Description
Conditions: 150 mM KOAc, 10 mM MgCl2 and 150 mM bicine (pH 8.5), 24 C. The record gives the reactivity of an RNA of 177 nucleotides to DMS and 2A3. It was measured as part of the RMDB library M2PK50. DMS adducts were read by reverse transcription with MarathonRT.

RNA sequence: GGGAACGACUCGAGUAGAGUCGAAAAGGAGUACUCUUCGGAGUACUCCAGCUACCGAGAAUCUUCCUCGGUUUAUAAAAGAAACCCUUGGAAACAAGGGAAAUACGGCAGGGUUCGCCCUGCCGAACUUGUUAUAGACGUUCGCGUCUAUAACAAGAAAAGAAACAACAACAACAAC
Reactivity to DMS in 0.01 (KOAc 150mM, MgCl2 10mM, bicine 150mM(pH8.5), 24C), signal-to-noise 2, nucleotides 027 to 126: g010g010a010g010u000a000c010u000c010u000u010c230g050g000a010g000u010a000c000u000c000c000a010g000c130u000a070c000c010g000a010g020a100a150u010c190u000u010c090c000u000c010g000g000u000u000u000a060u010a060a100a110a100g000a160a100a070c010c000c000u000u000g010g000a180a110a210c000a000a000g000g000g000a020a040a110u000a130c000g000g010c000a000g000g000g020u000u010c200g010c000c000c000u000g000c000c000g010a020a020
Reactivity to 2A3 in 0.01 (KOAc 150mM, MgCl2 10mM, bicine 150mM(pH8.5), 24C), signal-to-noise 2, nucleotides 027 to 126: g000g010a020g030u080a010c020u000c000u080u120c300g000g000a010g010u000a000c000u000c000c010a010g000c020u020a000c000c010g010a010g030a070a130u110c110u140u040c100c030u010c010g020g000u030u140u010a110u030a010a090a000a030g100a050a080a030c000c000c000u010u020g010g020a040a050a040c010a000a000g020g000g000a030a000a000u000a000c010g000g000c010a010g000g010g010u030u060c140g050c010c000c000u010g000c000c000g000a000a030